Chemical mapping of a 177-nucleotide RNA with DMS. The reactions ran in a buffer of 150 mM KOAc, 10 mM MgCl2 and 150 mM bicine (pH 8.5), at 24 C. For DMS the reverse transcriptase was MarathonRT.
RNA sequence: GGGAACGACUCGAGUAGAGUCGAAAAAGUCGACAACGCGCUUUGGGCGAAGCUCGAAGCCGAAGCCAGGGCAGAAUACAUCCGCAAACAGGAGCGCAAAGCAUGAUCAAGCAAGACCUGUACAAGCCCUCUGUCAAAAGUUCGCUUUUGACAGAGGAAAAGAAACAACAACAACAAC
Reactivity to DMS in 0.01 (KOAc 150mM, MgCl2 10mM, bicine 150mM(pH8.5), 24C), signal-to-noise 1, nucleotides 027 to 126: a140g020u010c070g030a100c080a080a170c020g060c110g000c020u000u000u040g000g010g020c000g000a160a110g000c020u010c010g000a010a050g000c020c000g020a060a100g020c040c030a060g000g000g040c000a070g000a120a060u000a080c160a060u000c050c050g000c100a100a090a110c070a050g000g090a180g000c250g000c040a040a030a110g000c040a080u000g010a050u000c050a090a080g040c040a110a070g000a070c030c030u000g020u030a050c170a110a160g000c060